[RMDB]
Structure probing data (2A3 and DMS) for a 177-nucleotide construct. The 2A3 profile rests on 13,240 reads. The DMS profile rests on 14,958 reads. For 2A3 the reverse transcriptase was SuperScript II with manganese. DMS (dimethyl sulfate) methylates the pairing face of unpaired adenines and cytosines.
RNA sequence: GGGAACGACUCGAGUAGAGUCGAAAAACACGAUAUCUUUCGCAAGAUCGAUCGUCAGCACAAAUACACGGGGCUCAAACUCGGCGGAGUCUACGGUUUUUAUCCCCGAUUCACCGGACCGCAGCGAUGCUUCUACUAGAUUCGUCUAGUAGAAGCAAAAAGAAACAACAACAACAAC
Reactivity to 2A3 in 0.01 (KOAc 150mM, MgCl2 10mM, bicine 150mM(pH8.5), 24C), signal-to-noise 9, nucleotides 027 to 126: a000c060a000c030g020a020u040a040u090c020u020u100u070c060g020c090a040a040g010a070u030c040g040a030u020c030g050u020c030a010g060c040a040c030a040a100a020u190a050c050a030c030g040g000g010g000c020u040c060a080a100a050c040u030c050g070g000c030g040g020a030g020u000c040u080a050c020g020g030u020u030u010u060u090a100u080c010c000c000c000g040a050u080u070c040a010c020c020g030g020a020c010c010g020c020a030g030c010g040a030
Reactivity to DMS in 0.01 (KOAc 150mM, MgCl2 10mM, bicine 150mM(pH8.5), 24C), signal-to-noise 6, nucleotides 027 to 126: a090c120a100c070g000a060u020a040u010c020u000u000u010c080g020c160a090a070g000a040u020c060g010a060u000c030g010u010c050a050g020c070a070c100a040a070a060u030a050c100a090c050g000g000g000g010c040u020c070a020a070a100c070u020c060g010g020c040g000g010a050g020u010c030u010a080c090g000g000u000u020u010u010u020a090u030c020c010c020c070g000a090u020u030c040a060c030c020g000g010a080c050c010g020c030a050g010c090g000a160
Reactivities are given for positions 27 through 126. Source: RMDB library OK1LIB, as collected in RNAgym. DMS adducts were read by reverse transcription with MarathonRT.